[RMDB]
RNA sequence: GGGAACGACUCGAGUAGAGUCGAAAAGGGACUGCCAGGGGAGCAUUCUGACCAAAGCACACCGUUCUGGCCCAGGCAGCUUUUCCAUCUAGCAGGUAUCCCUGCCCAAUGGAGCUGCUUAUCAGUAACCUUGAGCUUGAGUUCUCAAUUGCCUGGAUCAGAGCUCUACAUUCGUGUAGAGCUCUGAAAAAGAAACAACAACAACAAC
Reactivity to 2A3 in 0.01 (KOAc 150mM, MgCl2 10mM, bicine 150mM(pH8.5), 24C), signal-to-noise 1, nucleotides 027 to 156: g020g010g020a040c020u040g000c030c030a050g020g010g000g000a060g060c070a260u110u100c070u130g080a090c060c050a050a060a010g040c010a020c000a040c150c040g060u130u070c040u040g060g070c020c020c030a000g040g000c000a000g010c010u140u140u070u000c010c010a030u000c050u030a010g000c020a010g010g010u280a280u240c060c010c000u010g020c040c000c000a000a020u020g010g000a020g000c000u000g010c000u050u000a080u000c020a010g010u040a030a030c010c010u010u080g040a000g010c000u050u070g020a020g040u090u000c010u000c000a070a180u080u110g050c020c030u030g040g030a010